RNA sequence: GGGAACGACUCGAGUAGAGUCGAAAACACUGUAGAGAAACAGGAAGUGUUGUUUAUUAAUAAGCCUGACCAGGGUCACACCCAAGGUAGUAACCGAGUUUUACUUCUCCUGGUCUUGGGGAGAGGCCAUGGAGGCUAAGUUCGCUUAGCCUCCAUGAAAAGAAACAACAACAACAAC
Reactivity to DMS in 0.01 (KOAc 150mM, MgCl2 10mM, bicine 150mM(pH8.5), 24C), signal-to-noise 2, nucleotides 027 to 126: c020a130c060u000g040u000a140g000a140g000a110a090a080c040a040g020g020a140a090g040u000g000u010u000g010u010u000u010a110u020u000a160a100u010a060a150g010c040c040u000g040a030c010c030a030g050g040g000u020c130a120c050a190c030c010c010a100a040g010g000u000a040g010u020a040a070c060c110g030a120g000u000u000u010u000a060c000u000u000c050u000c020c010u000g000g000u010c030u000u010g010g000g020g010a160g000a120g030g010c100
Chemical mapping of a 177-nucleotide RNA with DMS.
It was measured as part of the RMDB library RFMREP.
For DMS, 959 sequencing reads were counted.
In probing experiments dimethyl sulfate is read out at A N1 and C N3, which are open when not base-paired.